Structure probing data (2A3 and DMS) for a 177-nucleotide construct. For 2A3 the reverse transcriptase was SuperScript II with manganese. For 2A3, 2,592 sequencing reads were counted.

RNA sequence: GGGAACGACUCGAGUAGAGUCGAAAACACAUUCUAUUCGUAGAAUGUGGAACGUAGAGAGAUCGACAGCGUCGCAGCUAUGUCGAACGUGGAAGAGCGCGCAGGGAUCGGGCUUCGGCCCGAUCAAUGAGUAUACCGAGUUCGCUCGGUAUACUCAAAAAGAAACAACAACAACAAC
Reactivity to 2A3 in 0.01 (KOAc 150mM, MgCl2 10mM, bicine 150mM(pH8.5), 24C), signal-to-noise 2, nucleotides 027 to 126: c010a000c000a000u010u010c010u020a020u060u050c130g060u010a000g000a000a000u000g010u010g000g030a040a000c030g070u130a020g050a020g010a000g000a220u040c000g020a010c000a020g020c010g090u180c060g040c090a050g000c010u090a050u240g020u050c040g020a060a020c020g020u020g020g100a150a070g020a040g050c010g010c010g020c020a040g110g060g000a000u000c000g000g000g000c020u040u060c240g120g000c000c010c000g000a000u000c000a000a040
Reactivity to DMS in 0.01 (KOAc 150mM, MgCl2 10mM, bicine 150mM(pH8.5), 24C), signal-to-noise 5, nucleotides 027 to 126: c010a010c000a000u000u000c000u000a030u000u010c170g040u000a020g000a010a000u010g020u000g010g010a080a050c130g010u000a090g010a160g010a120g000a110u000c010g020a030c040a050g020c030g010u000c220g040c130a140g000c020u010a050u010g010u000c020g000a020a100c080g010u000g010g010a050a050g000a040g000c020g020c070g020c120a100g000g010g000a010u000c010g000g010g010c000u000u020c240g040g000c010c000c000g000a000u000c010a040a060
The reactions ran in a buffer of 150 mM KOAc, 10 mM MgCl2 and 150 mM bicine (pH 8.5), at 24 C. The data come from the RNA Mapping Database (RMDB), library M2PK50.